Chemical mapping of a 207-nucleotide RNA with 2A3 and DMS. For 2A3, 3,325 sequencing reads were counted.
[RMDB]
RNA sequence: GGGAACGACUCGAGUAGAGUCGAAAAAACUCAUUCGUGAGUUAUCUACUCCUAAGUCAAGCGCCGAGGAUUAUUGUCAGCGGUGUGUCGGAAACGACAUGUCGCUUGGAUUUAUAAUCUAUCGCUUGAUAUGGACACUAGGCACAUUCGUGUGCAAUACUAUGGUCUCUUUCGAGAGACCAUAGUAAAAAGAAACAACAACAACAAC
Reactivity to 2A3 in 0.01 (KOAc 150mM, MgCl2 10mM, bicine 150mM(pH8.5), 24C), signal-to-noise 4, nucleotides 027 to 156: a000a000c040u030c030a050u110u080c170g090u070g020a020g000u000u030a070u070c040u080a130c090u010c010c000u030a200a020g010u010c010a010a010g000c020g030c140c180g300a150g090g000a000u010u010a010u010u020g020u020c010a010g000c000g000g010u000g010u000g000u020c010g000g050a080a080a090c010g000a000c010a000u000g020u000c000g000c000u000u030g030g000a010u050u300u030a010u020a000a000u010c020u020a070u030c000g000c000u000u000g000a000u010a030u030g030g000a010c010a040c200u180a140g120g070c060a010c000a030u060u120c300g120u070g010u010g040c000a010a030
Reactivity to DMS in 0.01 (KOAc 150mM, MgCl2 10mM, bicine 150mM(pH8.5), 24C), signal-to-noise 2, nucleotides 027 to 156: a020a010c000u010c000a140u010u000c240g040u020g000a060g000u000u000a060u000c030u000a080c040u000c000c050u000a080a300g000u000c000a050a000g000c010g040c200c100g010a270g020g000a030u000u000a010u000u010g020u000c020a060g020c000g020g020u000g020u000g000u000c000g000g000a160a100a300c000g000a020c000a020u000g000u000c000g020c040u000u000g010g000a020u000u000u000a030u000a020a020u000c030u000a160u010c030g040c010u000u020g000a030u000a240u000g000g000a110c090a110c040u020a130g000g000c010a030c020a110u000u000c190g020u020g030u010g000c020a160a210